[RMDB]
RNA sequence: GGGAACGACUCGAGUAGAGUCGAAAACAUUGCGGAAAACCUAUAUCCGAUAGGCGCUUCGGAAAGGGUGGUAGACGUUCCUGGGAACUCGGGUCGGGACGGGUCGGGACGGGACGGGCAAGCCUUUUACAUACAACCUUAAAGAAAGUAAUAGAACAUGACAUCUCUUUUUCGAAAGAGAUGUCAUAAAAGAAACAACAACAACAAC
Reactivity to 2A3 in 0.01 (KOAc 150mM, MgCl2 10mM, bicine 150mM(pH8.5), 24C), signal-to-noise 2, nucleotides 027 to 156: c030a080u090u070g000c000g070g040a020a030a020a020c040c010u070a050u050a040u210c040c010g030a030u090a090g150g000c090g010c060u040u040c050g110g000a060a070a030g100g010g000u040g050g030u050a070g000a050c030g020u000u020c070c010u020g000g000g060a030a010c000u010c040g030g000g060u030c050g060g010g010a000c050g000g030g070u240c140g020g000g010a030c070g020g040g050a010c010g040g000g020c020a010a050g030c000c040u040u130u070u070a010c010a030u100a010c010a000a050c000c020u080u260a090a030a030g070a030a040a010g130u180a020a190u240a060g140a040a010c140
This 207-nucleotide RNA was probed chemically with 2A3. Values cover nucleotides 27 to 156. The data come from the RNA Mapping Database (RMDB), library OK3TST. As a SHAPE reagent, 2A3 marks flexible, mostly unpaired nucleotides at the ribose 2'-OH. The reactions ran in a buffer of 150 mM KOAc, 10 mM MgCl2 and 150 mM bicine (pH 8.5), at 24 C. The 2A3 profile rests on 652 reads.